[RMDB]
RNA sequence: GGGAACGACUCGAGUAGAGUCGAAAAACUACCAAGACAGUGACGGUUGACGGGAAAUUAGGGUUUUGUACCGGAGAGGGAGCCUGAGAGAUUGCUCCCACGUCCAAGGACGGCAGCAGGCGCGAAAGUGGCAAUAGAAGUUCGCUUCUAUUGCCACAAAAGAAACAACAACAACAAC
Reactivity to 2A3 in 0.01 (KOAc 150mM, MgCl2 10mM, bicine 150mM(pH8.5), 24C), signal-to-noise 2, nucleotides 027 to 126: a000c060u140a060c000c010a020a000g020a020c010a020g040u020g030a020c040g050g030u040u040g030a000c010g000g020g040a000a010a130u120u140a090g060g020g000u000u060u060u120g050u060a040c000c000g020g050a100g000a040g050g000g000a010g000c020c010u110g100a060g000a020g020a120u080u190g000c000u000c000c020c000a000c000g070u000c000c010a010a020g060g000a000c010g010g070c000a020g000c010a010g030g000c000g000c000g040a040a030a000
Reactivity to DMS in 0.01 (KOAc 150mM, MgCl2 10mM, bicine 150mM(pH8.5), 24C), signal-to-noise 3, nucleotides 027 to 126: a060c070u000a100c040c040a080a070g000a090c110a090g000u030g010a060c090g000g010u050u000g010a090c070g040g000g000a020a050a100u040u000a080g000g000g000u010u000u000u020g010u000a060c020c020g000g000a120g010a160g010g000g020a030g000c000c060u020g000a170g030a120g010a160u020u000g000c020u020c000c000c000a030c030g020u010c010c010a070a120g000g000a070c020g030g010c040a040g020c040a040g000g000c010g010c030g010a050a060a050
Description:
Conditions: 150 mM KOAc, 10 mM MgCl2 and 150 mM bicine (pH 8.5), 24 C. Chemical mapping of a 177-nucleotide RNA with 2A3 and DMS. 2A3 adducts were read by reverse transcription with SuperScript II with manganese. Values cover nucleotides 27 to 126. DMS adducts were read by reverse transcription with MarathonRT.